[RMDB]
RNA sequence: GGGAACGACUCGAGUAGAGUCGAAAAAGCUUAUUUUGUACAGGAAGGAAAACAGUAAUUUAACCACAAUGGACUUUGUUGAAAAACAUAAUGCUAUUAACGAAGUAAGUGUGUAGUCUUUUCAGCUUUGAAAUUUUUCCUCAAGAUCUCCAAAAGACUACGUAUAAAGGUUCGCCUUUAUACGUAGAAAAGAAACAACAACAACAAC
Reactivity to 2A3 in 0.01 (KOAc 150mM, MgCl2 10mM, bicine 150mM(pH8.5), 24C), signal-to-noise 4, nucleotides 027 to 156: a000g060c070u120u060a080u070u160u120u100g090u080a040c030a020g020g070a050a030g030g030a020a060a050a060c030a020g030u080a050a160u060u100u130a080a030c020c010a050c040a060a110u060g030g030a020c040u050u030u060g000u000u020g030a040a040a010a000a010c040a030u240a190a060u170g000c010u030a040u130u080a090a020c010g010a020a000g020u010a060a010g010u030g020u010g020u080a050g030u050c020u030u050u030u070c030a020g020c020u030u050u070g050a060a060a030u060u060u020u040u020c000c000u050c020a030a020g010a140u050c050u030c060c080a050a060a010a010g050a030
Reactivity to DMS in 0.01 (KOAc 150mM, MgCl2 10mM, bicine 150mM(pH8.5), 24C), signal-to-noise 2, nucleotides 027 to 156: a090g030c040u000u000a100u000u000u010u010g000u000a150c070a130g000g010a110a090g000g000a040a050a050a110c070a080g030u010a070a090u010u000u000a110a110c040c020a060c050a060a040u010g010g010a050c020u010u000u000g010u000u000g000a010a040a130a040a020c020a140u010a110a110u010g000c020u000a300u000u000a010a040c010g010a010a060g030u000a040a070g020u010g010u000g000u000a100g000u000c030u000u010u000u000c040a090g010c040u000u020u000g010a060a050a180u010u020u010u000u000c020c020u000c010a050a070g000a080u000c010u000c010c000a040a050a060a150g030a160
The record gives the reactivity of an RNA of 207 nucleotides to 2A3 and DMS. Values cover nucleotides 27 to 156. For 2A3 the reverse transcriptase was SuperScript II with manganese. For 2A3, 2,883 sequencing reads were counted.